[RMDB]
RNA sequence: GGGAACGACUCGAGUAGAGUCGAAAAGCACGUAUUACGGGGUCCUUUACAUUUUCAAAGACGUGCAAUCAUGGCGUCACUAAGAUAUGGAGUGGAGGUUAUGAAUCAGAAAUUUGACAGGGACUUAGACCACUGAGUAUUUCGAUACUCAGUGGUCAAAAGAAACAACAACAACAAC
Reactivity to DMS in 0.01 (KOAc 150mM, MgCl2 10mM, bicine 150mM(pH8.5), 24C), signal-to-noise 2, nucleotides 027 to 126: g000c020a010c030g030u000a080u000u010a110c190g010g000g000g030u000c020c040u010u000u020a190c130a140u010u000u000u000c030a080a110a060g010a030c010g000u010g010c040a090a130u010c040a020u000g000g020c030g000u000c020a030c030u010a040a040g040a110u010a060u000g020g000a050g030u010g000g000a050g000g000u000u000a020u010g010a030a040u010c090a090g000a040a050a150u000u000u020g000a090c150a060g000g000g000a090c010u000u010a190
Reactivity to 2A3 in 0.01 (KOAc 150mM, MgCl2 10mM, bicine 150mM(pH8.5), 24C), signal-to-noise 1, nucleotides 027 to 126: g000c010a010c050g010u100a030u190u250a090c120g090g000g030g000u020c010c000u000u020u010a100c050a050u070u160u000u240c070a100a120a010g080a010c000g020u030g010c020a040a060u060c020a030u030g000g000c050g030u000c010a000c020u050a150a070g130a270u160a160u220g160g000a010g060u070g030g030a030g020g120u030u040a050u080g050a020a000u070c030a050g130a050a120a090u130u070u120g050a090c050a000g060g040g000a000c000u020u010a030